[RMDB]
RNA sequence: GGGAACGACUCGAGUAGAGUCGAAAAGAUAUGGAAAGUCGUAUACAAAGUCAUCAUGGAGCAUGCAAAUCGGAAACGAUUUGGAUGCUAUGAAGUGAUGAGCUUUGUAUACGACUUUCCUAAGUCAGAAGGUAACUAUCUUCGGAUAGUUACCUUCAAAAGAAACAACAACAACAAC
Reactivity to DMS in 0.01 (KOAc 150mM, MgCl2 10mM, bicine 150mM(pH8.5), 24C), signal-to-noise 2, nucleotides 027 to 126: g010a040u000a300u010g000g000a010a020a010g010u020c000g010u000a010u000a000c000a000a020a020g030u000c000a000u000c000a010u000g010g000a020g020c000a010u000g010c000a000a000a020u010c010g010g000a170a080a300c000g020a010u000u000u020g000g000a020u000g000c010u010a050u020g010a110a240g000u000g000a040u000g000a090g000c010u000u000u000g010u000a000u000a000c010g000a000c000u000u000u000c000c000u010a000a040g000u000c050a160

Structure probing data (DMS) for a 177-nucleotide construct. The DMS profile rests on 2,726 reads. Source: RMDB library TTRINS, as collected in RNAgym. The reactions ran in a buffer of 150 mM KOAc, 10 mM MgCl2 and 150 mM bicine (pH 8.5), at 24 C. DMS (dimethyl sulfate) methylates the pairing face of unpaired adenines and cytosines.